[RMDB]
RNA sequence: GGGAACGACUCGAGUAGAGUCGAAAAGGGGUCUUUCGGUUCCCAGCUACCCACCUUGUCAGAGCUGAAGCCUCCACGGCUCUUGGAUUUAGAGGCUGGGAUCGAAAGACGGAGGCACCCAAAACAUCAAUAGUAGUUUCGACUACUAUUGAUGUAACAUCCUGCUUUGAUUCGUCAAAGCAGGAUGAAAAGAAACAACAACAACAAC
Reactivity to DMS in 0.01 (KOAc 150mM, MgCl2 10mM, bicine 150mM(pH8.5), 24C), signal-to-noise 1, nucleotides 027 to 156: g000g000g010g020u000c000u000u020u000c010g020g100u000u010c010c000c100a100g010c050u040a040c030c010c080a230c130c060u010u010g040u000c150a110g010a040g000c000u030g000a050a020g030c030c010u000c010c010a300c050g040g000c020u010c000u000u010g040g010a150u000u010u030a090g010a220g010g030c000u000g000g040g020a020u000c030g000a050a000a010g010a030c030g060g010a050g060g050c030a160c020c020c020a100a020a150a090c010a030u010c000a030a010u000a010g000u000a020g000u000u000u000c270g040a100c010u000a010c000u000a010u000u000g000a010u000g000u000a060a270
Reactivity to 2A3 in 0.01 (KOAc 150mM, MgCl2 10mM, bicine 150mM(pH8.5), 24C), signal-to-noise 3, nucleotides 027 to 156: g040g020g020g000u020c030u020u000u000c020g060g040u210u300c030c000c000a000g030c020u190a220c030c030c080a070c060c060u120u140g070u180c100a020g000a000g010c000u020g000a090a000g040c000c000u000c020c000a010c010g020g000c010u000c030u050u180g020g000a040u130u240u300a160g040a050g030g180c010u020g000g000g000a000u020c010g000a000a010a000g000a000c000g000g000a000g000g000c000a040c010c020c000a070a130a010a040c000a000u000c000a000a010u010a000g000u000a000g000u010u090u150c240g100a030c000u000a000c000u000a000u000u000g000a000u000g000u000a000a010